RNA sequence: GGGAACGACUCGAGUAGAGUCGAAAACCAGGUUGCCUAAGGAGGGGUGAACCGGCCCAGGUCGGAAACGGAGCAGGUCAAAACUCCCGUGCUGAUCAGUAGUGGGAUCGCGCCUGUGAAUAGCCACUGCACUCCAGCCUGGGCAACAUAGCGAGACCCUCCUCUCAAUGUUCGCAUUGAGAGGAGGAAAAGAAACAACAACAACAAC
Reactivity to 2A3 in 0.01 (KOAc 150mM, MgCl2 10mM, bicine 150mM(pH8.5), 24C), signal-to-noise 1, nucleotides 027 to 156: c020c000a000g030g050u010u020g030c000c000u070a040a070g030g010a020g050g010g000g000u000g080a070a140c000c040g010g070c000c010c000a150g110g000u050c020g040g000a130a060a110c090g010g010a020g020c030a010g060g000u060c030a000a050a070a230c010u000c020c010c010g040u030g000c020u120g050a300u150c140a020g080u090a020g010u090g020g020g000a020u040c080g030c030g000c100c000u020g070u090g040a030a090u100a120g030c040c000a100c080u080g050c050a010c000u000c010c000a000g070c050c000u000g010g010g000c000a010a000c000a010u000a000g150c080g030a010g000a040c000